Background:
The data come from the RNA Mapping Database (RMDB), library TTRINS. An RNA of 177 nucleotides, treated with DMS and read out base by base. The RNA was probed in 150 mM KOAc, 10 mM MgCl2 and 150 mM bicine (pH 8.5) at 24 C. For DMS the reverse transcriptase was MarathonRT.
RNA sequence: GGGAACGACUCGAGUAGAGUCGAAAAGAUAUGGACUGGUCACAGUCCACCAUGUAUUGGGAGGAGUACUCGGAAACGAGUAUACUCCAUCGAUCAAUCAUGGUGGACUGUGACCAGUCCUAAGUCACUAGUGCAUUAAGUUCGCUUAAUGCACUAGAAAAGAAACAACAACAACAAC
Reactivity to DMS in 0.01 (KOAc 150mM, MgCl2 10mM, bicine 150mM(pH8.5), 24C), signal-to-noise 4, nucleotides 027 to 126: g010a060u000a300u000g000g000a010c000u000g000g020u000c000a010c000a020g010u000c000c000a010c010c000a010u000g000u030a010u000u010g000g020g010a040g020g000a030g010u000a020c000u000c000g020g000a100a150a280c010g000a020g020u010a090u000a060c000u000c000c000a170u010c200g000a120u010c000a020a010u000c000a010u000g020g000u000g010g000a010c000u000g010u000g000a000c010c000a000g000u000c000c000u000a010a050g010u000c040a290